[RMDB]
RNA sequence: GGGAACGACUCGAGUAGAGUCGAAAAGAACUCAGGAUUAAGAAACUCACUCAAAACUGCUCAACUACAUGGAAACUGAACAACCUGCUCCUGAAUGACUACUGGGUACACAACGAAAUGAAGGCAGAAAUAAAGAUGUUCUUUGAAACCAACGAGACUCCAGAUUAUAGUUCGCUAUAAUCUGGAGAAAAGAAACAACAACAACAAC
Reactivity to DMS in 0.01 (KOAc 150mM, MgCl2 10mM, bicine 150mM(pH8.5), 24C), signal-to-noise 2, nucleotides 027 to 156: g000a070a050c030u000c030a150g010g020a140u010u000a170a210g020a190a080a070c050u000c000a120c060u000c020a040a120a090a070c070u010g010c020u020c000a080a120c050u000a080c070a080u000g010g000a100a110a300c050u010g000a050a070c060a160a020c050c000u010g000c030u030c010c020u010g000a080a080u000g010a060c030u000a070c020u000g020g000g080u000a060c070a050c040a060a140c090g000a040a080a110u030g010a110a050g010g010c010a160g000a060a030a140u010a030a040a120g000a150u000g000u000u000c010u000u000u020g020a110a100a040c010c030a010a170c080g010a170g000a100
Reactivity to 2A3 in 0.01 (KOAc 150mM, MgCl2 10mM, bicine 150mM(pH8.5), 24C), signal-to-noise 4, nucleotides 027 to 156: g030a020a010c040u030c060a020g060g030a140u110u130a120a060g040a130a120a030c040u060c070a050c010u070c020a010a080a080a140c040u040g020c020u020c060a060a070c040u130a060c030a070u060g050g000a060a100a080c040u050g040a070a020c010a000a060c040c000u030g000c010u030c010c020u040g060a140a060u050g020a020c000u050a010c020u040g040g020g010u110a020c040a000c010a050a130c050g060a070a030a040u120g000a050a010g030g000c030a000g120a040a090a030u170a020a050a000g040a020u080g010u050u020c000u050u040u090g070a080a050a020c020c000a020a010c020g010a010g030a060
Chemical mapping of a 207-nucleotide RNA with DMS and 2A3. The reactions ran in a buffer of 150 mM KOAc, 10 mM MgCl2 and 150 mM bicine (pH 8.5), at 24 C. In probing experiments dimethyl sulfate is read out at A N1 and C N3, which are open when not base-paired. It was measured as part of the RMDB library OK3TST.